[RMDB]
RNA sequence: GGGAACGACUCGAGUAGAGUCGAAAAGGGUGCAUACGAUAUUCCCAAGACUUUACAUGCAUAGCAAUUGCUUGGCAAACUUCUACCGUCUGGAAUGCAAAACUUGUUUGUGUUUGUAAAUGAUAAAAGUAUACGCUGCAUUCGUGCAGCGUAUACUAAAAGAAACAACAACAACAAC
Reactivity to DMS in 0.01 (KOAc 150mM, MgCl2 10mM, bicine 150mM(pH8.5), 24C), signal-to-noise 2, nucleotides 027 to 126: g050g000g010u000g000c100a010u010a060c060g030a150u040a110u000u000c000c010c040a070a150g000a160c120u010u000u000a040c050a030u000g000c020a040u000a030g010c040a040a050u000u000g010c050u000u000g010g020c000a030a090a150c070u000u020c070u000a090c060c060g030u000c050u000g020g020a060a120u000g020c020a040a030a060a100c170u000u000g000u000u000u000g040u000g020u000u000u020g020u000a020a080a020u020g030a130u000a050a050a050
An RNA of 177 nucleotides, treated with DMS and read out base by base. In probing experiments dimethyl sulfate is read out at A N1 and C N3, which are open when not base-paired. Conditions: 150 mM KOAc, 10 mM MgCl2 and 150 mM bicine (pH 8.5), 24 C.